[RMDB]
RNA sequence: GGGAACGACUCGAGUAGAGUCGAAAAGAUAUGGAUCGAUUUGGGACAUGAAGGGAUCUCGGAAACGAGAUCAUUUCAACAGCCCAACGGUCGAUCCUAAGUCAAAACACCACCUUCGGGUGGUGAACUACUAGAUUAUGUUCGCAUAAUCUAGUAGAAAAGAAACAACAACAACAAC
Reactivity to 2A3 in 0.01 (KOAc 150mM, MgCl2 10mM, bicine 150mM(pH8.5), 24C), signal-to-noise 9, nucleotides 027 to 126: g010a010u040a020u120g000g000a000u000c010g000a000u010u020u080g040g000g010a060c230a300u300g010a060a000g040g010g000a000u000c000u000c000g000g020a040a030a020c000g000a000g000a010u000c000a010u000u020u000c020a070a070c030a070g030c000c000c000a010a020c050g050g000u010c000g000a000u000c000c000u010a080a010g040u020c020a000a010a120a180c010a010c010c000a010c010c000u050u110c300g210g000g000u000g020g010u000g000a000a020
Reactivity to DMS in 0.01 (KOAc 150mM, MgCl2 10mM, bicine 150mM(pH8.5), 24C), signal-to-noise 9, nucleotides 027 to 126: g010a040u000a240u020g000g000a000u000c000g010a020u000u010u000g010g010g010a050c120a220u010g000a020a010g010g000g000a000u000c000u000c000g010g000a070a060a120c010g010a010g000a010u000c000a020u010u000u000c000a060a100c290a170g000c010c000c000a010a050c300g010g000u000c000g010a000u000c000c000u000a010a130g010u000c030a070a100a090a260c010a010c000c000a000c000c010u000u010c250g030g010g020u000g000g010u000g000a020a140